[RMDB]
RNA sequence: GGGAACGACUCGAGUAGAGUCGAAAAGAAGCGUUGGUGUGCCUCACUCACUCAAUAAAUAACACACCAACGCGAUAGUAGUGAGUAGAGGAAGUAGGAGUGAGUGAGGCUACUCACUACAUUAAGCGUUAGUGUGUCUCUUUUUCCCCUACUUCCACACACUAACGCGUAAAGGCUGAAGGUGGAGAAGUAAAGUGGAAAAAGAGACCUUCAGCCGUUAAGAAAGUAGGUGAACACAUAAAUUUUACUUCUCCACCUACUUUCGAAAUUCAGAAUUCGUUCUGAAUAAAAGAAACAACAACAACAAC
Reactivity to DMS in 0.01 (KOAc 150mM, MgCl2 10mM, bicine 150mM(pH8.5), 24C), signal-to-noise 2, nucleotides 027 to 266: g020a090a060g000c030g010u000u000g000g070u000g010u000g000c000c020u000c020a000c000u000c000a010c000u000c020a300a160u020a100a140a080u000a070a030c020a000c010a000c000c020a000a000c010g000c000g000a020u020a030g000u010a000g020u000g020a000g000u000a070g000a070g000g010a000a050g010u000a050g040g010a010g020u000g000a010g010u000g020a010g000g000c020u010a010c000u000c000a000c010u000a000c000a040u010u020a100a060g000c000g000u000u000a000g010u000g000u000g000u000c040u010c000u000u000u000u000u000c030c000c040c300u010a060c110u040u000c020c030a080c000a000c000a000c000u010a010a030c010g000c000g010u020a030a070a120g030g000c000u010g000a000a020g030g000u000g020g000a030g000a030a160g010u000a070a170a120g050u030g040g020a060a010a000a020a020g010a050g020a030c000c000u000u000c010a000g010c030c000g000u010u000a070a180g000a000a000a020g000u000a000g000g000u000g000a120a080c250a080c170a130u030a080a100a140u010u000u000u000a050c020u010u000c000u000c010c000a020c000c000u000a000c010u000u000u000c000g000a050a110